Record summary: The record gives the reactivity of an RNA of 207 nucleotides to 2A3. 2A3 is a SHAPE reagent: it acylates the 2'-hydroxyl of flexible nucleotides of all four kinds. Conditions: 150 mM KOAc, 10 mM MgCl2 and 150 mM bicine (pH 8.5), 24 C.
[RMDB]
RNA sequence: GGGAACGACUCGAGUAGAGUCGAAAAGAGUACAUAUGCCCAGCCUUACUGGGUCGGCUGGAUGCUUCGUGCAAAUGCUAUGUACGCCUACGUAUAUGUGCGUAGAUGCCUAUAUUUUCUCUCCUGAGAAAAUAUAGAUGCAUACAAAGGCCAUGCACUGGACUGAUCAUUUCGAUGAUCAGUCCAGAAAAGAAACAACAACAACAAC
Reactivity to 2A3 in 0.01 (KOAc 150mM, MgCl2 10mM, bicine 150mM(pH8.5), 24C), signal-to-noise 1, nucleotides 027 to 156: g000a010g000u040a040c030a030u040a010u160g010c040c020c000a000g020c040c020u140u280a170c100u260g000g000g050u100c040g030g020c010u010g000g080a170u120g000c050u070u120c230g100u180g040c000a000a050a140u160g000c020u030a000u020g000u040a000c010g000c000c000u000a020c110g060u050a120u090a080u150g120u070g090c040g070u060a040g010a070u010g000c000c000u000a000u000a000u000u000u010u000c000u000c000u060c030c290u200g000a000g000a000a000a010a010u000a000u000a000g000a010u150g010c010a000u080a090c110a030a160a020g070g010c010c040a010u030g020c030a040